[RMDB]
RNA sequence: GGGAACGACUCGAGUAGAGUCGAAAAGAUAUGGACCACUCCGAAGAGGCAAUACUAUUCGGAAACGAACGAAUAUUGAACUACCUUGUAGAGUGGUCCUAAGUCAAAACCUAUCUUCGGAUAGGAACAUUGUUCAAUGCUUCGGCAUUGAACAAUGAAAAGAAACAACAACAACAAC
Reactivity to 2A3 in 0.01 (KOAc 150mM, MgCl2 10mM, bicine 150mM(pH8.5), 24C), signal-to-noise 2, nucleotides 027 to 126: g010a000u060a010u100g000g000a000c010c010a000c030u040c060c030g070a220a090g010a020g050g000c000a030a020u010a100c070u050a060u050u000c000g120g000a190a170a010c070g040a020a010c010g030a300a150u020a010u030u040g020a030a010c030u070a100c210c000u020u020g040u160a020g010a000g010u000g000g000u000c010c000u010a000a000g000u020c000a010a010a030a060c000c010u000a010u000c000u040u000c190g180g020a010u000a010g030g010a010a020
Reactivity to DMS in 0.01 (KOAc 150mM, MgCl2 10mM, bicine 150mM(pH8.5), 24C), signal-to-noise 2, nucleotides 027 to 126: g000a030u000a280u000g000g000a000c000c000a010c000u000c020c060g010a150a190g000a010g010g020c010a020a020u010a060c070u020a210u000u000c000g040g000a070a080a090c200g010a020a060c050g000a030a120u000a020u000u000g000a100a100c100u000a190c010c000u000u010g020u010a150g010a010g000u000g020g000u010c000c000u000a010a050g000u020c010a070a020a080a110c000c000u000a000u000c010u000u000c140g030g020a040u000a000g010g000a050a060